An RNA of 177 nucleotides, treated with 2A3 and read out base by base.
Values cover nucleotides 27 to 126.
It was measured as part of the RMDB library RFM100.
For 2A3, 1,564 sequencing reads were counted.
For 2A3 the reverse transcriptase was SuperScript II with manganese.
RNA sequence: GGGAACGACUCGAGUAGAGUCGAAAACUUUAAUAUAGCACUCCUAAUUCAUAACGCUACACUCGUGCAUAAUUUAUUUUUAAUUUGUGCACGAGCGUUAGUAAAUUAUUUACUUUUUGAAAUAAAACGAGAGAUGUUAUUUCGAUAACAUCUCUCGAAAAGAAACAACAACAACAAC
Reactivity to 2A3 in 0.01 (KOAc 150mM, MgCl2 10mM, bicine 150mM(pH8.5), 24C), signal-to-noise 3, nucleotides 027 to 126: c010u070u100u030a240a050u220a070u100a120g020c010a030c060u010c010c000u040a070a090u110u130c080a080u090a230a040c130g020c030u060a030c030a020c020u000c000g020u000g000c000a000u010a020a000u020u010u020a130u010u120u000u010u020a090a050u060u020u000g010u000g000c000a000c000g000a000g000c000g000u010u040a000g010u010a000a050a040u050u140a030u070u090u060a100c070u110u200u060u010u130g030a040a060a050u180a010a080a000a010